[RMDB]
RNA sequence: GGGAACGACUCGAGUAGAGUCGAAAAGGGCGGUGAUCGGCGUAGCGACCUGCGAUAAAGGGCUGCCCGCCACCAUGAUUGCGCUGGCCGCGAUGCACGACCUGCCGACUAUUCUGGUGCCGGGCGGAGUGUCUAGAGGAUUCGUCCUCUAGACACUAAAAGAAACAACAACAACAAC
Reactivity to 2A3 in 0.01 (KOAc 150mM, MgCl2 10mM, bicine 150mM(pH8.5), 24C), signal-to-noise 3, nucleotides 027 to 126: g050g000g000c040g000g060u110g040a300u040c020g010g000c080g090u100a010g020c030g020a030c000c000u030g000c020g010a010u130a110a150a010g100g030g000c020u050g000c020c010c000g000c000c000a010c010c010a050u160g020a130u160u250g010c020g000c030u020g030g010c010c010g020c000g120a180u250g020c070a080c020g000a010c000c020u030g010c040c000g000a020c000u070a110u160u000c050u060g020g000u010g000c020c000g000g020g000c040g020g020
Reactivity to DMS in 0.01 (KOAc 150mM, MgCl2 10mM, bicine 150mM(pH8.5), 24C), signal-to-noise 4, nucleotides 027 to 126: g010g000g010c020g020g020u010g020a100u000c020g010g010c010g020u010a090g010c010g010a040c020c010u010g010c030g010a100u010a060a120a120g010g000g020c020u000g000c020c010c000g020c200c000a030c010c010a060u010g000a070u000u010g020c020g010c010u000g000g000c000c010g020c000g020a110u010g020c010a110c000g010a040c020c020u000g020c030c000g010a090c040u000a100u010u000c080u000g010g010u000g010c300c010g010g010g010c020g020g000
The record gives the reactivity of an RNA of 177 nucleotides to 2A3 and DMS. For DMS, 6,525 sequencing reads were counted. For 2A3, 4,248 sequencing reads were counted. It was measured as part of the RMDB library OK2TRN.